[RMDB]
RNA sequence: GGGAACGACUCGAGUAGAGUCGAAAACAUGAUGGUUUUAGGUCAGCGUUAGACCUAGUCCUAGCUCCUGCCCUCUCUGUACCAUUCAGUGUUCCCCACACUGUCCUUGCCAUUCACACAGGCUUGCAGCUGGAACAAGGAAGAGAGCUCAUAGGGACCAAGUGCCUUUUUUCGAAAAGGCACUUGGAAAAGAAACAACAACAACAAC
Reactivity to 2A3 in 0.01 (KOAc 150mM, MgCl2 10mM, bicine 150mM(pH8.5), 24C), signal-to-noise 2, nucleotides 027 to 156: c080a120u180g030a100u100g140g070u060u140u060u070a020g010g000u010c020a010g050c200g150u070u140a020g000a010c010c010u020a020g000u020c000c010u010a020g010c050u040c010c020u040g060c040c010c010u020c000u010c030u020g060u090a090c030c000a040u070u140c020a020g060u010g020u060u070c010c010c050c000a010c000a000c020u060g030u070c010c020u030u060g040c000c020a050u080u110c020a080c000a020c000a160g030g020c020u000u060g010c030a070g010c030u060g000g010a040a040c010a060a050g030g020a010a020g070a000g000a000g000c020u030c080a090u140a060g010g000g040a020
Reactivity to DMS in 0.01 (KOAc 150mM, MgCl2 10mM, bicine 150mM(pH8.5), 24C), signal-to-noise 2, nucleotides 027 to 156: c070a120u020g030a090u000g030g010u000u000u000u000a030g010g020u000c000a170g060c200g050u040u000a190g000a010c000c040u000a030g000u020c030c030u000a090g010c020u000c010c040u000g000c030c020c000u000c020u000c040u000g010u000a060c020c030a120u010u000c050a080g000u000g000u000u000c030c030c020c040a200c050a040c020u000g010u000c060c040u000u010g000c030c010a110u000u000c060a200c050a190c060a070g050g030c090u000u000g030c040a110g020c020u000g000g000a050a080c050a050a120g010g000a070a060g010a080g010a040g010c010u000c040a060u000a110g030g000g010a120
Source: RMDB library OK3TST, as collected in RNAgym. The record gives the reactivity of an RNA of 207 nucleotides to 2A3 and DMS. The reactions ran in a buffer of 150 mM KOAc, 10 mM MgCl2 and 150 mM bicine (pH 8.5), at 24 C.